RNA sequence: GGGAACGACUCGAGUAGAGUCGAAAAGAUACAGCUAGUACAUGAUACAUGCUAGGAUCACUCAUGUGACAUGAUCAUCAUGAUACUAGGCGCGAUCGCUAGACAGACAGUCAUACUGCUGGUACACGUAGUGUCCUCACUUCGGUGAGGACACUACAAAAGAAACAACAACAACAAC
Reactivity to 2A3 in 0.01 (KOAc 150mM, MgCl2 10mM, bicine 150mM(pH8.5), 24C), signal-to-noise 3, nucleotides 027 to 126: g040a030u120a050c040a020g070c030u020a030g010u010a020c020a020u010g000a010u020a050c010a020u040g060c050u110a090g190g090a120u060c000a010c050u170c070a120u260g000u020g090a030c000a040u020g040a150u080c030a010u000c000a000u050g040a040u040a000c020u020a020g020g010c000g000c030g030a020u030c020g020c110u020a020g070a070c020a010g060a040c010a020g030u060c000a060u090a200c020u020g000c010u000g010g000u090a050c090a000c170
Reactivity to DMS in 0.01 (KOAc 150mM, MgCl2 10mM, bicine 150mM(pH8.5), 24C), signal-to-noise 3, nucleotides 027 to 126: g000a090u000a070c060a150g040c000u000a000g020u000a010c070a010u000g000a050u000a070c050a040u000g000c170u000a110g000g020a080u000c030a070c070u000c170a150u010g020u010g000a080c010a030u000g000a100u000c220a000u000c010a020u010g000a220u000a020c030u000a050g030g000c080g000c110g000a050u000c010g020c090u000a120g010a110c040a020g010a050c100a110g010u000c120a100u000a300c020u010g020c030u010g000g040u010a080c140a070c150

Annotation
The data come from the RNA Mapping Database (RMDB), library OK2TRN. The record gives the reactivity of an RNA of 177 nucleotides to 2A3 and DMS. Values cover nucleotides 27 to 126.